[RMDB]
RNA sequence: GGGAACGACUCGAGUAGAGUCGAAAACGCUGGGAUAUGAGUUCUAAGAACAACAGCGUCUGAAGCGCGCACGGACGACAUGUUCUUUCUACCAUAUCCUGUGCUGAAGCGCGCACGGCAACCGAAAGGUGCGAAAAUCGGCGGUUCGCCGCCGAAACAAAAACAGCGGUUUCGACCGCUGUUUUUGAAAAGAAACAACAACAACAAC
Reactivity to 2A3 in 0.01 (KOAc 150mM, MgCl2 10mM, bicine 150mM(pH8.5), 24C), signal-to-noise 2, nucleotides 027 to 156: c050g000c000u040g000g000g000a000u000a010u000g140a140g150u140u140c160u300a120a020g000a000a000c030a030a010c050a090g130c020g000u000c000u010g060a100a030g000c020g000c010g000c040a020c050g020g010a000c010g030a070c050a160u150g000u020u000c040u020u090u020c060u040a030c000c020a000u000a000u000c000c000u000g030u010g010c020u050g020a070a030g000c000g000c010g000c000a020c010g070g040c030a090a060c000c000g030a070a040a020g000g000u000g030c010g060a070a000a040a160u030c000g000g000c040g020g100u060u030c280g050c080c000g000c020c010g010a030a020a000
The data come from the RNA Mapping Database (RMDB), library RNAMAK. The record gives the reactivity of an RNA of 207 nucleotides to 2A3. For 2A3 the reverse transcriptase was SuperScript II with manganese. For 2A3, 1,117 sequencing reads were counted. Reactivities are given for positions 27 through 156. Conditions: 150 mM KOAc, 10 mM MgCl2 and 150 mM bicine (pH 8.5), 24 C.